[RMDB]
RNA sequence: GGGAACGACUCGAGUAGAGUCGAAAAUGGACAAUUCUUUGUUGUGUGGGGCUGUCCUGUACAUUGUUCAGCUGCAUCUCUGUCCUGUACCCAUAAGGUGCCAGUAGCACUUCUCCAGUGGUGACAAAAUGCCGAUGGCAUUCGUGCCAUCGGCAUUAAAAGAAACAACAACAACAAC
Reactivity to DMS in 0.01 (KOAc 150mM, MgCl2 10mM, bicine 150mM(pH8.5), 24C), signal-to-noise 1, nucleotides 027 to 126: u010g000g000a020c020a040a090u010u010c150u000u000u000g000u000u000g000u010g040u030g010g000g030g040c060u020g020u000c030c000u010g020u010a140c280a100u000u010g000u000u000c030a050g020c020u000g020c000a020u000c030u000c100u010g010u000c050c060u020g000u000a100c040c030c010a100u000a100a080g010g000u000g010c000c030a100g020u010a080g040c000a030c040u000u030c030u000c070c040a130g000u000g000g040u000g030a020c170a050a100

Conditions: 150 mM KOAc, 10 mM MgCl2 and 150 mM bicine (pH 8.5), 24 C.
The record gives the reactivity of an RNA of 177 nucleotides to DMS.
Values cover nucleotides 27 to 126.
Source: RMDB library OK2TST, as collected in RNAgym.